[RMDB]
RNA sequence: GGGAACGACUCGAGUAGAGUCGAAAACUAUGGCGCGCGAUAUCCGCGUUAUCAUCGUCAAAUUGGCCGAUCGUUUACAUAACAUGCGCACGCUUGGCUCAUUACAUUCGCAAAAGCGGCGACGAAAGUAUGAUAUCAUCUUCGGAUGAUAUCAUACAAAAGAAACAACAACAACAAC
Reactivity to 2A3 in 0.01 (KOAc 150mM, MgCl2 10mM, bicine 150mM(pH8.5), 24C), signal-to-noise 9, nucleotides 027 to 126: c020u030a050u120g030g000c020g000c000g000c040g090a100u050a090u300c060c010g000c000g010u010u040a080u070c040a020u030c000g070u020c030a030a110a160u080u080g040g000c010c000g020a030u020c020g030u030u070u110a090c070a070u160a150a070c040a080u180g020c030g000c040a090c060g010c030u010u020g020g000c000u020c040a010u030u090a090c030a080u090u170c050g000c020a090a190a090a050g020c010g030g010c020g010a020c020g030a060a030a010
Reactivity to DMS in 0.01 (KOAc 150mM, MgCl2 10mM, bicine 150mM(pH8.5), 24C), signal-to-noise 9, nucleotides 027 to 126: c040u000a060u000g010g020c110g010c030g020c080g020a180u010a070u010c160c020g020c020g020u000u000a040u000c110a060u000c050g020u000c040a060a080a100u010u000g020g020c010c010g010a040u000c050g010u000u000u000a080c100a080u010a080a100c100a300u010g000c040g010c080a060c020g010c050u000u000g000g020c020u010c140a050u000u010a090c180a120u010u000c090g010c020a050a020a050a100g020c030g000g000c120g010a040c070g010a060a090a100